Structure probing data (DMS and 2A3) for a 177-nucleotide construct. For DMS the reverse transcriptase was MarathonRT. The RNA was probed in 150 mM KOAc, 10 mM MgCl2 and 150 mM bicine (pH 8.5) at 24 C.

[RMDB]
RNA sequence: GGGAACGACUCGAGUAGAGUCGAAAAUUGUUGGGAUUCCGACAAGUUUAACAUUAAACUCUGGGCCAGUCCCGCGAAACCGCCGGGGCCACUCUAUAGCACGCGCUCCCCGGUGGGGCGAUGGCGCGCAUCGGUCGGUCUUCGGGCCGAUCGAUGUAAAAGAAACAACAACAACAAC
Reactivity to DMS in 0.01 (KOAc 150mM, MgCl2 10mM, bicine 150mM(pH8.5), 24C), signal-to-noise 8, nucleotides 027 to 126: u010u000g010u000u000g000g000g010a230u020u030c000c010g000a060c110a040a030g010u000u010u000a060a240c230a120u040u010a070a050a020c010u000c050u020g000g000g010c080c020a110g000u000c020c010c020g000c070g010a050a110a160c030c010g020c010c020g010g000g010g010c300c070a030c080u020c150u010a090u020a090g010c080a080c090g000c070g000c080u010c000c000c000c000g000g000u000g000g000g010g000c080g010a070u030g000g000c020g020c070
Reactivity to 2A3 in 0.01 (KOAc 150mM, MgCl2 10mM, bicine 150mM(pH8.5), 24C), signal-to-noise 8, nucleotides 027 to 126: u050u020g040u050u070g030g000g100a200u240u090c010c000g010a020c030a050a000g010u000u040u070a140a100c100a070u090u130a080a040a030c020u040c080u140g010g040g010c030c030a020g040u050c020c000c000g010c020g010a080a080a040c020c010g000c010c020g000g000g010g000c010c010a100c030u100c030u080a140u110a140g080c070a020c110g040c030g000c020u060c010c000c000c000g010g000u050g000g000g020g000c060g070a090u120g070g000c040g000c010